This 177-nucleotide RNA was probed chemically with 2A3.
The data come from the RNA Mapping Database (RMDB), library OK1LIB.
[RMDB]
RNA sequence: GGGAACGACUCGAGUAGAGUCGAAAAGGUGCCCGAUCUUGCUGAUGAUGUUUGCGCGAUGCGUCUUCGGAAAAUGACGGAGGUGUUUGGCGACCGGGCCUAUGUGUCGCUUUGCCUGCGCCGACGGGGUCGGAUAGUGCUUCGGCACUAUCCGACCAAAAGAAACAACAACAACAAC
Reactivity to 2A3 in 0.01 (KOAc 150mM, MgCl2 10mM, bicine 150mM(pH8.5), 24C), signal-to-noise 1, nucleotides 027 to 126: g100g040u070g080c010c000c030g070a120u120c020u070u110g010c040u060g030a090u050g030a050u090g160u030u200u100g020c090g000c050g020a030u050g020c000g000u000c000u000u000c000g030g020a120a090a070a140u170g000a000c010g010g000a020g010g010u060g080u140u160u140g070g010c020g000a010c000c000g090g000g000c130c090u160a260u130g190u100g000u030c000g000c100u000u030u090g000c020c000u000g130c020g020c050c060g000a000c020g050g060